[RMDB]
RNA sequence: GGGAACGACUCGAGUAGAGUCGAAAAGCGCCGAGACGAGAGGGGUGACAUGGAUCACCUGGACAGCACCGACGACCGCAUUCUGGUCGAGCUGACCGACCAUGCCCGGGCCACUUUCGCCGAGAUCCCUAUGGAUCCGAUUCGUCGGAUCCAUAGGAAAAGAAACAACAACAACAAC
Reactivity to DMS in 0.01 (KOAc 150mM, MgCl2 10mM, bicine 150mM(pH8.5), 24C), signal-to-noise 4, nucleotides 027 to 126: g000c100g030c030c020g000a060g040a100c060g000a060g020a150g000g000g000g010u000g010a100c060a100u010g000g010a190u000c020a040c090c060u030g010g000a120c000a040g030c020a090c120c090g000a140c040g000a050c010c020g010c230a220u040u030c100u000g020g000u010c000g000a110g010c010u000g000a040c000c010g010a040c020c040a060u000g010c030c040c170g000g000g000c010c050a050c050u010u000u000c040g010c040c000g000a070g000a060u030c080
Reactivity to 2A3 in 0.01 (KOAc 150mM, MgCl2 10mM, bicine 150mM(pH8.5), 24C), signal-to-noise 9, nucleotides 027 to 126: g060c040g030c020c020g050a050g010a080c030g000a010g010a050g070g050g010g020u080g030a040c030a090u140g060g010a170u050c030a050c080c040u020g020g030a020c010a010g000c020a030c050c060g120a090c030g010a010c020c020g050c160a160u160u120c110u280g010g010u010c000g010a020g000c030u020g010a060c010c010g010a000c000c010a020u050g010c010c030c000g020g030g000c020c000a050c020u050u060u040c030g010c020c000g020a040g020a100u050c010
Source information: This 177-nucleotide RNA was probed chemically with DMS and 2A3. Conditions: 150 mM KOAc, 10 mM MgCl2 and 150 mM bicine (pH 8.5), 24 C. Values are in units of 0.01, from 0 to 300, in steps of 10. Values cover nucleotides 27 to 126. 2A3 adducts were read by reverse transcription with SuperScript II with manganese.